[RMDB]
RNA sequence: GGGAACGACUCGAGUAGAGUCGAAAAGAUAUGGAUUCUCUAAGCGAAGAACUAUAAGGGUCGGAAACGACCCAUAGGGAGCUGGAAUCCUAAGUCAAAUCAUUUCACACUUCGGUGUGAAAUGAAACAUAAUUCGUAUCUUCGGAUACGAAUUAUGAAAAGAAACAACAACAACAAC
Reactivity to DMS in 0.01 (KOAc 150mM, MgCl2 10mM, bicine 150mM(pH8.5), 24C), signal-to-noise 6, nucleotides 027 to 126: g010a020u000a300u010g000g000a020u000u000c010u000c150u010a120a040g010c000g000a090a170g000a130a170c000u000a010u000a090a100g020g000g010u000c000g010g000a070a060a180c010g010a010c000c000c010a010u000a000g000g000g020a080g020c000u000g000g000a020a010u000c000c010u010a040a100g000u000c030a070a100a160u000c000a010u000u000u000c000a010c000a010c000u000u010c210g020g000u000g020u000g000a000a000a000u000g010a010a080a170
Reactivity to 2A3 in 0.01 (KOAc 150mM, MgCl2 10mM, bicine 150mM(pH8.5), 24C), signal-to-noise 4, nucleotides 027 to 126: g010a000u050a030u130g020g000a010u030u020c100u040c130u240a140a000g000c020g300a300a030g020a150a050c010u010a020u080a290a300g000g000g000u000c000g020g000a050a040a010c010g000a000c060c000c000a000u000a000g010g000g010a010g000c020u020g010g000a000a000u000c000c000u020a130a010g060u020c050a030a040a200u050c010a000u000u010u000c010a000c000a000c010u050u100c290g140g000u000g000u000g000a000a000a010u000g010a000a000a000
Chemical mapping of a 177-nucleotide RNA with DMS and 2A3. For DMS the reverse transcriptase was MarathonRT. 2A3 adducts were read by reverse transcription with SuperScript II with manganese. The reactions ran in a buffer of 150 mM KOAc, 10 mM MgCl2 and 150 mM bicine (pH 8.5), at 24 C. The data come from the RNA Mapping Database (RMDB), library TTRDEL.